[RMDB]
RNA sequence: GGGAACGACUCGAGUAGAGUCGAAAAAUUCAUAAUCAGCAUUUGCAACAGGAUAAGAUUUAUCUUGAUCUGGAACAUUAAAGGUAUCCGUUAAUGCUUUUUCAAAAACCUUUGUUGCACUGGACAGCUAUUGUUCGGCAUUCGUGCCGAACAAUAGAAAAGAAACAACAACAACAAC
Reactivity to DMS in 0.01 (KOAc 150mM, MgCl2 10mM, bicine 150mM(pH8.5), 24C), signal-to-noise 1, nucleotides 027 to 126: a140u010u010c060a120u020a110a100u020c040a050g000c090a080u010u000u020g020c100a080a170c020a010g010g000a080u000a060a080g000a060u010u010u000a100u020c110u010u000g000a060u000c110u050g000g010a060a040c040a000u000u000a050a070a030g000g050u010a070u010c030c050g000u000u000a010a050u000g020c070u000u040u000u010u000c100a040a080a090a150a070c060c030u000u000u000g020u000u000g010c010a050c140u040g010g000a100c200a080g000